Structure probing data (2A3 and DMS) for a 177-nucleotide construct. 2A3 adducts were read by reverse transcription with SuperScript II with manganese. For 2A3, 2,551 sequencing reads were counted.
RNA sequence: GGGAACGACUCGAGUAGAGUCGAAAAACAUUAGCGAACGGCGCUGCGGUCACCUCACGCAGCACGGCAACCACGGCUUUCAACGCCUCGCUAUUGGGUCUCGGCGGCGGUCGGUAUGGCCGGCGCCCGCACCACCUUUAUUCGUAAAGGUGGUGCGAAAAGAAACAACAACAACAAC
Reactivity to 2A3 in 0.01 (KOAc 150mM, MgCl2 10mM, bicine 150mM(pH8.5), 24C), signal-to-noise 2, nucleotides 027 to 126: a000c000a010u000u000a000g020c010g060a040a030c030g020g000c070g000c050u000g010c010g010g000u100c050a090c130c040u010c020a040c030g010c000a000g000c010a010c010g000g030c060a050a030c060c050a060c100g000g000c020u080u300u300c140a150a090c120g020c000c010u030c010g000c000u030a020u020u100g100g000g030u030c010u010c030g010g000c020g020g030c000g000g000u000c040g070g230u300a250u290g060g020c000c000g010g080c000g000c000c000
Reactivity to DMS in 0.01 (KOAc 150mM, MgCl2 10mM, bicine 150mM(pH8.5), 24C), signal-to-noise 2, nucleotides 027 to 126: a080c020a030u000u000a030g010c020g020a060a080c080g000g000c130g060c030u000g000c000g060g000u000c110a300c090c020u000c040a240c010g040c030a020g030c030a030c030g030g000c110a130a090c180c140a100c190g000g000c030u010u000u000c180a090a150c250g010c010c010u010c030g010c010u000a020u000u000g000g000g020u030c010u000c030g050g010c010g000g000c000g010g000u000c010g000g000u010a060u000g000g010c000c010g020g000c020g010c020c000
About this RNA
Reactivities are given for positions 27 through 126. As a SHAPE reagent, 2A3 marks flexible, mostly unpaired nucleotides at the ribose 2'-OH.